[RMDB]
RNA sequence: GGGAACGACUCGAGUAGAGUCGAAAAGGAACUAUGUUCAGGCAUGAGGCAUCCGCGUGCGUGCGAAAGCACCCGGAAACGGCUGAGCAUAGUUCCGAGCUGAAGGAGGCGCGGCUCAAAAUAAAAAGGGGCUACAACUGUUCGCAGUUGUAGUCCCAAAAGAAACAACAACAACAAC
Reactivity to DMS in 0.01 (KOAc 150mM, MgCl2 10mM, bicine 150mM(pH8.5), 24C), signal-to-noise 1, nucleotides 027 to 126: g000g020a000a010c000u000a010u000g010u000u000c000a010g000g030c020a000u010g010a100g010g030c110a120u000c020c000g000c090g030u000g000c030g110u020g010c010g010a070a090a260g000c000a020c020c000c000g000g000a020a070a090c000g020g000c000u000g000a010g000c000a000u000a010g000u000u000c000c000g000a000g030c030u020g010a040a080g020g000a010g000g000c000g010c010g040g040c030u000c010a110a050a170a100u020a050a060a110a110a100
Reactivity to 2A3 in 0.01 (KOAc 150mM, MgCl2 10mM, bicine 150mM(pH8.5), 24C), signal-to-noise 3, nucleotides 027 to 126: g010g000a000a000c000u000a000u000g000u010u000c010a000g000g000c010a020u030g030a040g100g030c020a020u020c000c010g010c000g010u000g000c020g020u020g000c010g080a160a030a020g000c000a000c000c010c020g020g000a030a070a030c000g020g000c000u000g000a000g000c000a000u000a000g000u000u000c000c000g000a000g000c010u020g010a100a030g020g030a020g020g000c000g000c010g020g000c000u000c010a100a110a010a030u240a050a100a030a020a010
This 177-nucleotide RNA was probed chemically with DMS and 2A3. The 2A3 profile rests on 5,025 reads. The RNA was probed in 150 mM KOAc, 10 mM MgCl2 and 150 mM bicine (pH 8.5) at 24 C.